RNA sequence: GGGAACGACUCGAGUAGAGUCGAAAAGAUAUGGAUCGAUGCGCAGCAACAGCUAUACAUCGGAAACGAUGUGAUAGACAUGCUGCGCAUCGAUCCUAAGUCAAACGAGAUAGUUCGCUAUCUCGAACAUUAAUUACACGUUCGCGUGUAAUUAAUGAAAAGAAACAACAACAACAAC
Reactivity to DMS in 0.01 (KOAc 150mM, MgCl2 10mM, bicine 150mM(pH8.5), 24C), signal-to-noise 9, nucleotides 027 to 126: g000a050u000a300u010g000g010a010u000c000g020a000u000g010c000g010c000a010g010c010a030a100c300a230g010c010u000a010u000a010c000a000u000c000g010g000a130a090a240c010g010a010u000g010u010g010a020u000a000g010a040c130a230u000g010c000u000g010c000g000c000a000u000c000g000a000u000c000c010u000a010a080g010u000c020a090a100a300c020g010a010g010a010u000a010g010u000u010c230g010c010u000a010u000c000u000c010g000a090a170